[RMDB]
RNA sequence: GGGAACGACUCGAGUAGAGUCGAAAAUCACGAUCUCCUUCAUCGCGGGUGUGAGUUCGUCGUGCGGCAGCAGCGCCCGGAUGACCUCGGGCAGCUUCUCCUGCGGCACCCGUGUGGUGAUCCGCAGGGUUACAGUGGCGUUCGCGCCACUGUAACCAAAAGAAACAACAACAACAAC
Reactivity to DMS in 0.01 (KOAc 150mM, MgCl2 10mM, bicine 150mM(pH8.5), 24C), signal-to-noise 2, nucleotides 027 to 126: u010c060a140c080g020a030u000c000u010c010c080u010u010c050a070u000c080g000c070g000g010g010u000g000u010g000a060g020u000u000c130g000u000c080g020u010g030c090g020g020c150a090g000c050a140g010c050g020c000c010c000g020g010a050u010g000a060c300c060u010c020g030g010g020c030a120g020c060u000u000c040u000c030c000u000g000c010g000g000c010a010c010c000c040g020u010g030u000g010g000u000g000a110u010c010c020g000c030a020g000
Reactivity to 2A3 in 0.01 (KOAc 150mM, MgCl2 10mM, bicine 150mM(pH8.5), 24C), signal-to-noise 2, nucleotides 027 to 126: u070c020a010c060g020a020u020c300u020c020c010u130u030c030a100u110c040g120c070g040g060g010u070g030u040g030a190g050u110u120c060g040u050c030g020u110g070c080g030g000c060a040g000c010a020g010c020g000c020c000c020g040g010a070u140g080a030c010c040u070c000g000g030g000c020a060g020c060u000u000c010u010c000c000u010g010c000g000g000c010a010c000c000c030g140u140g050u080g040g000u010g000a030u050c010c020g000c070a030g010